[RMDB]
RNA sequence: GGGAACGACUCGAGUAGAGUCGAAAACUGUUCACAGACUAAAUGAUGACGGGUUGCUAAUCACAAAGCGUGAUUGCAGCUCAAGAUAUAGUCGGACUCACUCUAGAGUGAGACAACACGUAAUACCUUCCCGCACGUGAAUUCACCGUUCCGUAGGCUUUGUUGUUCUGUUCGCAGAACAACAAAGAAAAGAAACAACAACAACAAC
Reactivity to DMS in 0.01 (KOAc 150mM, MgCl2 10mM, bicine 150mM(pH8.5), 24C), signal-to-noise 2, nucleotides 027 to 156: c040u010g100u000u000c020a090c100a110g030a220c000u010a050a130a090u010g000a140u000g040a180c160g000g010g000u010u000g040c000u010a060a040u000c020a080c030a150a150a150g020c290g020u020g010a010u010u000g030c020a020g010c030u000c000a040a050g000a060u000a070u000a210g020u000c000g000g000a220c010u010c040a030c010u000c130u010a160g010a100g030u000g000a010g020a060c050a030a030c050a030c070g040u000a110a130u000a040c030c040u010u010c010c010c000g030c130a080c070g000u000g000a100a150u010u010c080a080c020c060g020u000u000c000c000g020u050a110g020g000
Reactivity to 2A3 in 0.01 (KOAc 150mM, MgCl2 10mM, bicine 150mM(pH8.5), 24C), signal-to-noise 5, nucleotides 027 to 156: c030u040g070u140u080c080a050c040a170g020a020c020u040a090a100a120u190g080a050u080g060a060c120g010g000g000u010u010g010c140u300a000a000u000c000a000c030a130a300a120g190c110g060u000g000a000u000u000g010c010a000g000c000u000c000a000a000g000a000u060a000u000a040g010u000c000g010g020a020c000u010c020a000c000u010c030u130a080g030a000g150u000g000a000g020a030c080a050a020c020a010c070g060u090a080a050u130a270c000c000u030u030c020c010c010g030c020a020c020g080u150g040a040a070u200u100c040a050c060c070g040u050u030c030c020g040u040a040g080g050
The record gives the reactivity of an RNA of 207 nucleotides to DMS and 2A3. The reactions ran in a buffer of 150 mM KOAc, 10 mM MgCl2 and 150 mM bicine (pH 8.5), at 24 C. The 2A3 profile rests on 2,915 reads. The data come from the RNA Mapping Database (RMDB), library ARCHII. For DMS the reverse transcriptase was MarathonRT. For DMS, 2,083 sequencing reads were counted.